Description: The data come from the RNA Mapping Database (RMDB), library RFMREP. This 177-nucleotide RNA was probed chemically with DMS and 2A3. For DMS the reverse transcriptase was MarathonRT. The DMS profile rests on 2,698 reads. Conditions: 150 mM KOAc, 10 mM MgCl2 and 150 mM bicine (pH 8.5), 24 C.
RNA sequence: GGGAACGACUCGAGUAGAGUCGAAAACGUAAGUCGAAGCAGACAACAGGGAAACAGGUUAAUAUUCCUGUGCCAGUGUGCACUCAAAGCUGACGCUUUGGGGCCGCCUCUGCUGGGUUUUCGCCCAUCAUUAUGGUCUGUUCGCAGACCAUAAUGAAAAAGAAACAACAACAACAAC
Reactivity to DMS in 0.01 (KOAc 150mM, MgCl2 10mM, bicine 150mM(pH8.5), 24C), signal-to-noise 3, nucleotides 027 to 126: c050g010u010a050a080g030u010c060g000a160a090g000c030a050g000a070c140a100a080c160a090g000g010g010a070a100a020c030a010g010g000u000u000a090a090u010a230u000u020c020c000u000g000u000g010c040c070a070g010u000g000u010g040c030a120c010u000c000a000a020a010g010c000u010g020a150c300g000c010u000u000u010g010g000g000g010c050c050g010c030c100u000c010u000g010c030u000g000g010g010u010u000u010u000c050g000c000c010c010a160
Reactivity to 2A3 in 0.01 (KOAc 150mM, MgCl2 10mM, bicine 150mM(pH8.5), 24C), signal-to-noise 2, nucleotides 027 to 126: c010g050u040a000a070g050u040c000g050a090a020g010c020a020g030a040c030a120a060c050a160g050g050g000a140a300a020c000a010g060g040u080u080a120a040u030a160u200u130c000c010u030g000u020g020c030c000a060g010u030g060u100g050c080a130c300u010c000a000a000a000g000c030u150g160a040c170g000c000u000u000u010g000g010g000g000c020c000g000c000c030u020c000u020g000c010u020g000g040g020u030u000u020u030c050g030c000c000c010a020